[RMDB]
RNA sequence: GGGAACGACUCGAGUAGAGUCGAAAAGAUAUGGAUGUAUCAUCAUGCUCGAAGAACUCGGAAACGAGGGAGAGUUUGAUGAGUACAUCCUAAGUCAAACGUGAAUGGAGUUCGCUCCAUUCACGAAGAAAUAUUGCAGCUUCGGCUGCAAUAUUUCAAAAGAAACAACAACAACAAC
Reactivity to DMS in 0.01 (KOAc 150mM, MgCl2 10mM, bicine 150mM(pH8.5), 24C), signal-to-noise 1, nucleotides 027 to 126: g000a000u010a300u050g000g000a000u000g010u000a000u020c000a030u000c000a030u000g010c000u000c000g010a090a140g000a070a300c000u010c000g000g010a120a130a200c000g000a010g010g000g000a140g040a020g010u000u010u010g000a000u000g000a040g000u000a020c010a000u000c000c000u000a000a080g030u010c050a060a120a190c020g010u010g000a040a010u000g040g000a020g000u000u030c210g000c020u010c000c000a020u010u000c000a030c000g010a040a050
Reactivity to 2A3 in 0.01 (KOAc 150mM, MgCl2 10mM, bicine 150mM(pH8.5), 24C), signal-to-noise 1, nucleotides 027 to 126: g000a010u060a000u100g000g000a000u000g000u000a000u070c000a000u000c010a000u050g000c030u020c040g240a300a080g000a080a020c020u020c010g000g090a080a060a070c000g020a000g000g000g030a040g000a000g030u030u050u020g000a010u010g010a040g030u000a000c000a000u000c000c000u010a060a020g020u000c020a150a050a010c010g000u000g000a000a020u000g010g020a000g030u080u140c230g160c120u000c000c000a020u000u000c000a000c000g010a010a020